[RMDB]
RNA sequence: GGGAACGACUCGAGUAGAGUCGAAAACAAAAAUCAGCCGGUGUGGUGGCACCUGCCUGUAAUCCCAGCUACUCAGGAGGCUGAGGCAGAAUUGCUUGAACCCGGGAGGCAGAGGUUGCAGUGAGCCCAACUUUCGAGUUUUCGAACUCGAAAGUUGAAAAGAAACAACAACAACAAC
Reactivity to DMS in 0.01 (KOAc 150mM, MgCl2 10mM, bicine 150mM(pH8.5), 24C), signal-to-noise 3, nucleotides 027 to 126: c080a020a070a050a140a020u040c060a100g030c010c060g000g020u000g010u010g010g030u010g000g020c040a100c120c000u000g060c020c020u000g030u020a120a090u020c050c080c010a080g010c040u000a080c040u020c050a100g000g000a220g000g010c040u000g000a060g000g000c030a020g010a050a090u010u000g010c050u020u010g030a140a080c010c010c030g000g000g010a140g000g010c000a060g030a050g010g010u020u020g030c050a070g000u000g010a070g000c000c060
Reactivity to 2A3 in 0.01 (KOAc 150mM, MgCl2 10mM, bicine 150mM(pH8.5), 24C), signal-to-noise 2, nucleotides 027 to 126: c020a000a070a040a010a010u140c050a020g010c000c020g020g000u070g020u020g090g120u060g060g000c000a020c000c010u030g010c020c000u100g020u100a070a050u050c020c000c000a000g020c000u090a090c030u060c110a050g020g110a070g110g000c050u030g030a030g010g000c000a000g050a120a140u150u050g020c000u040u140g050a050a100c030c000c010g030g000g000a070g020g000c020a010g000a010g120g010u070u010g000c040a010g030u000g080a040g020c000c000

Chemical mapping of a 177-nucleotide RNA with DMS and 2A3. The reactions ran in a buffer of 150 mM KOAc, 10 mM MgCl2 and 150 mM bicine (pH 8.5), at 24 C. 2A3 adducts were read by reverse transcription with SuperScript II with manganese. For DMS, 4,163 sequencing reads were counted. The data come from the RNA Mapping Database (RMDB), library OK1LIB.